[RMDB]
RNA sequence: GGGAACGACUCGAGUAGAGUCGAAAACCUGGUUUAGGGUUCCAGGCUAGCCCUAUCUAUCGGUCGAGAUGCGAGCGCUUAAGCUCUAAUUGAGUGGCUGAGUUAGUGGUGAACGUAUCCCUAUGUUAAAACGGUAGCUGCUUCGGCAGCUACCGAAGUACAGCAUUAUCUUCGGAUAAUGCUGUACAAAAGAAACAACAACAACAAC
Reactivity to 2A3 in 0.01 (KOAc 150mM, MgCl2 10mM, bicine 150mM(pH8.5), 24C), signal-to-noise 2, nucleotides 027 to 156: c000c000u000g000g020u050u080u040a030g010g030g000u070u040c010c000a000g000g020c020u020a010g020c000c000c000u000a010u000c020u020a140u060c000g010g020u000c000g010a000g010a200u020g010c020g020a000g000c020g040c160u250u300a120a090g000c000u000c020u020a050a040u030u050g000a040g030u170g040g000c010u000g010a000g000u010u020a040g010u100g150g040u050g040a080a020c040g050u080a080u160c000c010c000u020a050u060g080u030u100a060a090a000a010c000g000g010u000a000g000c000u000g000c010u000u080c230g090g020c020a000g010c000u000a000c000c000g000a000a000
Reactivity to DMS in 0.01 (KOAc 150mM, MgCl2 10mM, bicine 150mM(pH8.5), 24C), signal-to-noise 1, nucleotides 027 to 156: c000c020u000g020g030u020u010u010a050g000g030g020u010u000c000c010a060g040g090c010u000a240g030c020c000c010u000a050u000c020u010a060u000c060g000g020u000c020g000a300g010a070u000g010c280g020a070g020c000g040c300u020u010a110a170g020c010u000c000u030a120a070u010u000g000a220g000u020g030g000c030u000g000a110g010u000u000a020g000u040g050g030u000g000a090a090c080g000u000a130u010c000c000c000u000a140u000g000u000u010a070a050a140a140c040g010g010u000a010g010c000u000g010c010u010u010c300g040g060c000a040g000c000u000a000c000c010g000a000a040
Conditions: 150 mM KOAc, 10 mM MgCl2 and 150 mM bicine (pH 8.5), 24 C. Structure probing data (2A3 and DMS) for a 207-nucleotide construct.